[RMDB]
RNA sequence: GGGAACGACUCGAGUAGAGUCGAAAAAGUUCCUAGGAGGCUAGAAGAGCCAACCAACAGAGAAGGGAAAGCAGUCUGUUCUGAACAUAGGGACAUAAGUUCAUUCAUGCCAAGUAUCUUUCCAGCAUCAGCAUAGAGUGUUCGCACUCUAUGCUGAAAAAGAAACAACAACAACAAC
Reactivity to DMS in 0.01 (KOAc 150mM, MgCl2 10mM, bicine 150mM(pH8.5), 24C), signal-to-noise 2, nucleotides 027 to 126: a090g010u000u000c010c000u000a040g020g030a290g020g000c020u000a080g010a190a090g030a140g010c040c030a130a100c050c080a050a090c090a040g000a050g000a100a080g000g000g000a030a050a020g010c040a030g000u000c120u000g010u000u000c100u000g010a060a130c090a090u010a100g020g000g000a030c060a040u000a100a070g010u030u000c030a070u000u000c060a050u020g000c080c070a020a100g000u000a080u010c060u000u000u000c040c010a140g010c240a160
Reactivity to 2A3 in 0.01 (KOAc 150mM, MgCl2 10mM, bicine 150mM(pH8.5), 24C), signal-to-noise 1, nucleotides 027 to 126: a010g030u030u000c010c010u020a050g050g100a020g000g000c030u050a000g140a150a020g010a260g120c010c020a020a140c000c000a010a030c020a010g100a000g030a050a060g080g000g000a000a000a100g060c030a020g030u000c010u020g070u100u000c020u070g040a090a030c040a060u140a030g040g090g060a010c030a030u220a100a020g000u030u050c030a030u200u060c020a020u040g050c040c010a050a030g060u030a120u070c040u050u020u000c000c000a030g050c000a070